[RMDB]
RNA sequence: GGGAACGACUCGAGUAGAGUCGAAAAUCUAUCCGAAUGAGCAGGUGCCCAGGUGGCCACGUCGUACUCCGCGCAGGUUUAUAAUGCCUCGCAAAGGUGUCUGUUCGAGAGUACUCGGGGUGAAGAGAUCAGGUGAGGAGUUCGCUCCUCACCUGAUAAAAGAAACAACAACAACAAC
Reactivity to 2A3 in 0.01 (KOAc 150mM, MgCl2 10mM, bicine 150mM(pH8.5), 24C), signal-to-noise 2, nucleotides 027 to 126: u030c030u030a120u000c010c010g240a140a140u130g020a020g000c110a080g030g100u060g030c010c010c010a010g000g040u060g080g000c000c000a050c050g240u100c010g000u000a000c000u050c070c040g020c000g040c070a000g100g020u050u200u020a210u060a210a130u220g000c000c010u000c000g150c070a090a050a000g000g010u020g000u000c000u000g060u020u060c010g000a000g000a000g260u020a060c060u000c020g000g000g000g020u030g050a090a010g050a030g000
Reactivity to DMS in 0.01 (KOAc 150mM, MgCl2 10mM, bicine 150mM(pH8.5), 24C), signal-to-noise 2, nucleotides 027 to 126: u010c020u000a050u000c010c030g000a050a080u020g000a180g030c030a090g000g000u000g000c060c030c040a130g020g000u020g000g000c020c030a030c000g000u010c090g010u010a000c020u000c010c040g000c190g000c090a050g000g000u000u000u070a000u070a210a110u000g000c000c000u010c130g020c270a120a160a050g020g000u000g000u000c020u000g000u020u000c000g000a090g010a000g000u000a030c020u000c050g110g000g030g050u020g010a060a060g000a080g010

Chemical mapping of a 177-nucleotide RNA with 2A3 and DMS. DMS adducts were read by reverse transcription with MarathonRT. Source: RMDB library OK1LIB, as collected in RNAgym. Reactivities are rounded to 0.1 and cut off at 0 and 3. Conditions: 150 mM KOAc, 10 mM MgCl2 and 150 mM bicine (pH 8.5), 24 C. Values cover nucleotides 27 to 126.